[RMDB]
RNA sequence: GGGAACGACUCGAGUAGAGUCGAAAAAUGUGCACGGUGGCCAGUAUCCUUCCUCCCCUUCCCAUAUGGGAGGUGGAGCAAAUAUUCCUUACGGGCGUAACCCAGCGAUGCACAACGGGCUUCCUGCCCCGGUGAUAGGUUUCGACCUAUCACCGGGAAAAGAAACAACAACAACAAC
Reactivity to DMS in 0.01 (KOAc 150mM, MgCl2 10mM, bicine 150mM(pH8.5), 24C), signal-to-noise 2, nucleotides 027 to 126: a020u000g000u000g040c000a010c020g000g000u000g000g010c100c020a030g000u000a050u000c020c060u050u030c290c000u010c000c000c020c180u000u000c040c000c100a140u030a090u020g000g000g000a070g000g000u010g020g000a010g000c190a020a010a070u020a150u010u000c010c000u000u130a070c070g020g030g000c140g000u000a030a040c300c280c020a070g050c010g010a110u000g020c000a000c010a050a110c140g000g000g000c040u000u030c030c000u000g000c160
Reactivity to 2A3 in 0.01 (KOAc 150mM, MgCl2 10mM, bicine 150mM(pH8.5), 24C), signal-to-noise 6, nucleotides 027 to 126: a000u050g010u010g010c020a010c020g130g100u030g020g000c030c000a060g050u100a160u060c000c030u100u190c010c000u010c020c000c000c020u040u080c090c010c030a180u210a140u300g010g000g000a000g010g000u030g020g000a000g000c010a000a110a050u190a120u110u150c030c030u140u170a080c080g030g030g010c040g070u100a070a070c010c010c010a020g050c030g110a130u020g020c010a000c020a030a040c040g050g050g000c040u040u000c010c010u030g030c000
Structure probing data (DMS and 2A3) for a 177-nucleotide construct. The reactions ran in a buffer of 150 mM KOAc, 10 mM MgCl2 and 150 mM bicine (pH 8.5), at 24 C. 2A3 adducts were read by reverse transcription with SuperScript II with manganese. The DMS profile rests on 2,641 reads. Source: RMDB library OK1LIB, as collected in RNAgym.